[RMDB]
RNA sequence: GGGAACGACUCGAGUAGAGUCGAAAAGGGCGGUGCUCCUCAGGAAGACGCCGAGUGAAGCGAUCUGGACUCCGGCGUUACUCGUAUGGGCUCCCGAUUUUCGAGAAGAAAAGUCCGAAGGAGUUGGGUAUAGAAGUAUGUUCGCAUACUUCUAUACAAAAGAAACAACAACAACAAC
Reactivity to DMS in 0.01 (KOAc 150mM, MgCl2 10mM, bicine 150mM(pH8.5), 24C), signal-to-noise 6, nucleotides 027 to 126: g010g010g010c100g020g020u000g000c020u000c010c020u000c060a180g010g010a090a100g020a040c020g010c020c000g000a060g010u000g010a250a110g010c060g010a050u010c050u000g000g000a070c010u000c080c060g010g000c000g010u000u010a050c040u000c040g010u010a090u000g010g010g020c050u000c020c000c030g000a140u000u000u000u000c030g000a110g010a120a150g000a050a050a060a070g010u000c030c030g000a110a080g000g000a090g010u000u000g010g020
Reactivity to 2A3 in 0.01 (KOAc 150mM, MgCl2 10mM, bicine 150mM(pH8.5), 24C), signal-to-noise 3, nucleotides 027 to 126: g030g000g010c080g000g070u110g010c000u020c000c020u030c010a030g030g070a090a080g060a030c000g000c020c010g000a010g010u050g060a070a020g040c060g060a130u070c080u100g010g080a030c020u030c070c090g000g000c010g000u010u030a020c010u010c030g040u090a100u150g050g020g000c010u000c000c000c000g010a010u010u030u020u050c040g010a040g030a280a020g070a030a150a020a020g090u050c060c010g020a030a020g040g010a020g030u170u190g200g030
Chemical mapping of a 177-nucleotide RNA with DMS and 2A3. The 2A3 profile rests on 2,837 reads. DMS adducts were read by reverse transcription with MarathonRT. For 2A3 the reverse transcriptase was SuperScript II with manganese. The RNA was probed in 150 mM KOAc, 10 mM MgCl2 and 150 mM bicine (pH 8.5) at 24 C.